[RMDB]
RNA sequence: GGGAACGACUCGAGUAGAGUCGAAAACUCGCAUGAUGCUCAAUAAUGACAUUGAUGAGUUUGUGCGUAAGCUUGAAUUAAAUGUACCAGUUUAUAAUCGCCUUUCUGAUUGCCGUCAAAACGUACUGGUUAACAUGGCUUUUAAUAUGGGCAUCGGAAACGAAUUUAAGUUCGCUUAAAUUCGUUUAAAAGAAACAACAACAACAAC
Reactivity to 2A3 in 0.01 (KOAc 150mM, MgCl2 10mM, bicine 150mM(pH8.5), 24C), signal-to-noise 8, nucleotides 027 to 156: c010u010c010g000c020a050u080g010a020u060g050c010u000c030a060a150u180a150a090u160g110a100c070a130u120u190g050a060u070g000a070g030u020u070u080g050u050g000c040g030u050a030a020g010c020u060u090g100a080a040u200u160a190a120a070u090g040u060a120c010c000a040g020u000u100u090a170u110a090a100u130c040g040c010c030u070u150u090c050u080g090a140u070u150g020c020c010g070u110c070a040a050a090a060c040g050u080a030c040u090g000g000u040u090a020a010c020a020u030g010g000c000u050u060u040u090a120a110u150a120u080g010g010g000c010a010u020c010g020g020
Reactivity to DMS in 0.01 (KOAc 150mM, MgCl2 10mM, bicine 150mM(pH8.5), 24C), signal-to-noise 5, nucleotides 027 to 156: c040u000c020g010c070a140u010g010a030u010g010c030u000c010a050a190u010a100a130u000g010a100c080a240u000u010g020a150u010g000a060g010u000u000u010g030u000g000c030g030u000a030a130g010c030u000u000g020a080a150u000u000a060a090a110u000g020u000a060c030c020a080g010u000u000u000a070u000a160a120u010c060g010c040c030u010u000u000c050u010g010a060u000u000g020c050c040g010u010c050a060a060a060a120c070g000u000a050c020u000g010g010u000u000a070a100c060a080u000g020g010c030u000u010u000u000a030a150u000a100u000g010g010g000c000a040u000c030g020g010
This 207-nucleotide RNA was probed chemically with 2A3 and DMS. Conditions: 150 mM KOAc, 10 mM MgCl2 and 150 mM bicine (pH 8.5), 24 C. DMS (dimethyl sulfate) methylates the pairing face of unpaired adenines and cytosines. For DMS the reverse transcriptase was MarathonRT.